RNA sequence: GGGAACGACUCGAGUAGAGUCGAAAAGUGCUGGGCGGGCCUAAAACUACAUUUCCCAAGGAUCACAGCAGGCACUAACCGGAAGGGGCGGCCUCAAAUCCAUUGCGCACGCGCACCAGGAGUCUGUAAGGAGUACGUAUUUCGAUACGUACUCCUUAAAAGAAACAACAACAACAAC
Reactivity to DMS in 0.01 (KOAc 150mM, MgCl2 10mM, bicine 150mM(pH8.5), 24C), signal-to-noise 2, nucleotides 027 to 126: g020u050g000c050u000g000g010g010c030g000g000g020c090c050u020a010a020a110a100c140u010a080c220a200u000u020u010c000c000c010a140a140g000g020a050u050c090a070c110a160g010c090a060g000g000c030a090c060u000a260a120c040c050g000g000a160a070g010g000g000g010c070g030g000c010c040u020c050a080a080a100u030c030c040a100u030u000g000c130g010c040a020c060g000c020g000c060a070c090c030a080g000g000a090g000u000c000u050g000u000
Reactivity to 2A3 in 0.01 (KOAc 150mM, MgCl2 10mM, bicine 150mM(pH8.5), 24C), signal-to-noise 2, nucleotides 027 to 126: g020u020g060c000u000g000g040g000c020g010g020g070c000c000u090a080a080a040a020c070u190a040c000a230u000u010u030c010c020c020a050a050g070g000a060u010c010a050c010a140g140c050a000g000g000c000a000c200u070a040a060c030c070g040g040a090a060g070g000g020g000c000g000g020c030c000u050c060a030a050a030u010c040c000a090u060u160g010c040g020c050a050c010g140c010g000c010a030c000c020a040g000g030a030g040u010c000u070g090u100
An RNA of 177 nucleotides, treated with DMS and 2A3 and read out base by base. Source: RMDB libraries RFM100 and RFMREP, as collected in RNAgym. The reactions ran in a buffer of 150 mM KOAc, 10 mM MgCl2 and 150 mM bicine (pH 8.5), at 24 C. DMS adducts were read by reverse transcription with MarathonRT.